[RMDB]
RNA sequence: GGGAACGACUCGAGUAGAGUCGAAAAGUUGUUGAUGGAAGUGGGCGUAACUAAUGGCAUGAGCAUAAGAACCCGUGCAGCUAGAUUGGAUGUAAGUCGUAACAAGGUUGCGGUAGGUGAACCUGCCUCACUAAGGUGUGUUCGCACACCUUAGUGAAAAAGAAACAACAACAACAAC
Reactivity to DMS in 0.01 (KOAc 150mM, MgCl2 10mM, bicine 150mM(pH8.5), 24C), signal-to-noise 1, nucleotides 027 to 126: g030u000u000g030u000u000g000a130u000g000g000a080a110g040u010g030g010g020c060g000u020a040a050c050u010a020a070u000g030g000c080a030u000g030a050g030c030a050u020a110a090g000a090a100c070c020c000g000u000g030c040a060g020c040u000a060g010a120u010u010g000g000a060u000g000u020a100a100g010u000c040g030u020a030a070c050a120a100g000g000u000u000g010c030g000g020u000a030g000g000u000g040a050a090c020c010u000g010c080c030

Description: Chemical mapping of a 177-nucleotide RNA with DMS. For DMS the reverse transcriptase was MarathonRT. The RNA was probed in 150 mM KOAc, 10 mM MgCl2 and 150 mM bicine (pH 8.5) at 24 C.